[RMDB]
RNA sequence: GGGAACGACUCGAGUAGAGUCGAAAAGAUAUGGACUACUCACGAGCAAGGCUGCGAUUCGGAAACGAAUUAGCAGCUGAUGACCUCGUGAGGUAGUCCUAAGUCAAAAUCUCACUUCGGUGAGAAAGAAUAUGUCCAUGUUCGCAUGGACAUAUUCAAAAGAAACAACAACAACAAC
Reactivity to DMS in 0.01 (KOAc 150mM, MgCl2 10mM, bicine 150mM(pH8.5), 24C), signal-to-noise 6, nucleotides 027 to 126: g000a060u000a300u010g010g000a010c000u000a030c000u000c010a000c020g000a010g010c040a090a110g010g020c000u000g030c000g000a020u000u010c000g020g000a140a110a220c000g000a000a010u000u000a100g020c010a010g010c000u000g000a040u010g000a100c300c000u000c000g000u000g000a010g010g010u000a000g020u000c000c000u000a010a060g010u000c020a120a070a120a130u010c010u000c000a000c010u000u020c220g020g010u000g010a010g000a010a080a080
Reactivity to 2A3 in 0.01 (KOAc 150mM, MgCl2 10mM, bicine 150mM(pH8.5), 24C), signal-to-noise 4, nucleotides 027 to 126: g030a000u070a040u180g000g000a010c000u010a000c010u010c010a000c000g020a010g000c040a230a290g040g010c000u010g000c000g010a010u000u010c000g030g020a070a090a060c010g020a000a010u010u060a090g000c010a000g000c000u000g000a010u020g010a010c000c010u000c000g000u000g010a020g000g000u000a000g000u000c000c000u000a050a000g010u000c000a010a030a100a300u030c000u010c000a010c010u070u120c300g120g000u010g010a030g010a040a060a000

Chemical mapping of a 177-nucleotide RNA with DMS and 2A3. The DMS profile rests on 8,517 reads. For DMS the reverse transcriptase was MarathonRT. The 2A3 profile rests on 16,848 reads. For 2A3 the reverse transcriptase was SuperScript II with manganese.